[RMDB]
RNA sequence: GGGAACGACUCGAGUAGAGUCGAAAAGGCACUGUGUGCCUGGGACUGCCCCACACACCCUAGGCCUCCCUUGGCCUGGUUGCACCAUGGUGCCAUGCAGAGACUGCGCCCACUGAAAGACAGCUGCCCUCACUGGCACCGCCUGGCAACAUUGGCGCUCCCUUAUACGGUUCGCCGUAUAAGGGAGAAAAGAAACAACAACAACAAC
Reactivity to 2A3 in 0.01 (KOAc 150mM, MgCl2 10mM, bicine 150mM(pH8.5), 24C), signal-to-noise 2, nucleotides 027 to 156: g000g000c000a000c030u000g010u000g010u010g080c040c050u020g020g000g020a140c200u250g050c050c000c000c000a000c000a000c000a010c000c010c050u070a050g030g010c010c000u030c020c020c000u010u090g110g000c000c010u010g060g000u000u020g010c040a060c040c010a060u070g000g000u000g000c000c000a040u110g000c020a030g020a030g050a070c050u040g000c000g010c020c030c020a150c100u100g070a130a060a030g020a000c010a020g000c010u040g020c010c000c040u100c010a040c030u000g000g020c010a020c000c010g020c000c000u040g020g000c000a000a030c050a190u030u130g010g000c010g010
Reactivity to DMS in 0.01 (KOAc 150mM, MgCl2 10mM, bicine 150mM(pH8.5), 24C), signal-to-noise 1, nucleotides 027 to 156: g000g050c020a080c060u010g030u000g010u010g010c010c060u000g050g090g000a230c230u000g030c020c010c030c070a030c070a030c000a100c040c100c040u010a070g020g000c000c010u000c030c010c000u000u000g010g000c020c000u020g000g020u000u000g020c030a100c080c010a100u000g040g020u000g040c030c000a000u000g040c020a130g000a080g000a080c020u000g000c020g000c030c020c010a220c080u000g010a110a180a050g010a140c000a300g010c050u000g050c000c010c030u050c060a000c050u020g010g010c030a010c010c000g020c060c040u000g020g010c020a030a050c010a250u010u000g010g000c020g010
The data come from the RNA Mapping Database (RMDB), library ARCHII. An RNA of 207 nucleotides, treated with 2A3 and DMS and read out base by base. DMS adducts were read by reverse transcription with MarathonRT. Reactivities are given for positions 27 through 156. 2A3 adducts were read by reverse transcription with SuperScript II with manganese. The reactions ran in a buffer of 150 mM KOAc, 10 mM MgCl2 and 150 mM bicine (pH 8.5), at 24 C.